[RMDB]
An RNA of 207 nucleotides, treated with 2A3 and read out base by base.

RNA sequence: GGGAACGACUCGAGUAGAGUCGAAAACCUGUAGUCCCAGCUACUCGGGAGGCUGAGGCUGGAGGAUCGCUUGAGUCCAGGAGUUCUGGGCUGUAGUGCGCUAUGCCGAUCGGGUGUCCGCACUAAGUUCGGCAUCAAUAUGGUGACCUCCCGGGAGGCAGUAGAGGUAGUUCGCUACCUCUACUGCAAAAGAAACAACAACAACAAC
Reactivity to 2A3 in 0.01 (KOAc 150mM, MgCl2 10mM, bicine 150mM(pH8.5), 24C), signal-to-noise 2, nucleotides 027 to 156: c070c040u050g120u010a100g010u040c030c060c010a000g000c000u070a070c000u000c000g000g000g000a000g000g000c020u020g120a010g030g020c010u000g000g020a180g030g130a080u100c030g010c040u040u080g160a010g030u000c000c000a000g040g050a240g140u300u180c000u010g000g000g000c000u000g000u000a010g030u000g010c030g000c000u060a060u030g000c000c000g050a080u050c060g050g000g000u010g020u020c090c150g160c010a010c030u110a180a160g020u080u050c000g000g010c000a020u000c020a010a110u120a070u220g050g060u110g050a110c020c000u020c020c000c000g000g000g000a110g080
For 2A3 the reverse transcriptase was SuperScript II with manganese. Reactivities are given for positions 27 through 156.